The data come from the RNA Mapping Database (RMDB), library OK3TST. This 207-nucleotide RNA was probed chemically with 2A3 and DMS. DMS adducts were read by reverse transcription with MarathonRT. The DMS profile rests on 4,228 reads. Values cover nucleotides 27 to 156.
[RMDB]
RNA sequence: GGGAACGACUCGAGUAGAGUCGAAAAGAUGAAAGACUUCUAUGAGAGCGAAGAUAAAGCGCCAAAGGGUAACGCCGAGUUUAUCCGCUUCAUGGCUGAAGGUUGGGAUCUGGAUGACGAAUUCAGCGAUGAAAACAUUUCCUGGCUUUGCGCUCACGUACUAGGACUGAUUCGUCAGUCCUAGUACAAAAGAAACAACAACAACAAC
Reactivity to 2A3 in 0.01 (KOAc 150mM, MgCl2 10mM, bicine 150mM(pH8.5), 24C), signal-to-noise 4, nucleotides 027 to 156: g110a020u190g080a030a080a030g030a030c020u130u030c020u110a050u080g020a030g000a000g040c020g010a010a010g000a020u160a080a100a010g010c020g010c070c070a050a040a050g040g000g000u020a030a000c040g040c060c080g040a030g010u050u040u020a040u020c020c010g000c010u020u030c010a030u060g120g000c020u020g000a010a010g050g010u080u070g060g020g000a080u020c050u070g090g050a080u130g040a030c060g030a020a040u020u030c000a010g010c030g070a030u040g030a010a010a050a020c030a040u020u020u100c030c020u030g030g000c000u030u050u060g020c020g000c010u040c010a020c120
Reactivity to DMS in 0.01 (KOAc 150mM, MgCl2 10mM, bicine 150mM(pH8.5), 24C), signal-to-noise 2, nucleotides 027 to 156: g000a180u000g020a110a110a150g010a090c030u000u000c020u010a050u010g000a300g000a010g020c000g000a060a100g010a110u010a050a100a080g000c040g020c020c070a080a080a140g020g000g030u000a070a070c030g020c020c070g000a200g000u000u000u000a040u000c020c000g000c050u000u000c020a020u000g010g040c050u000g010a050a030g000g040u010u000g010g030g010a060u010c060u010g020g010a150u000g010a210c070g020a060a160u000u010c020a020g030c000g000a060u010g000a060a070a050a070c020a120u000u000u000c000c020u000g010g020c070u010u000u000g000c000g000c010u010c000a030c300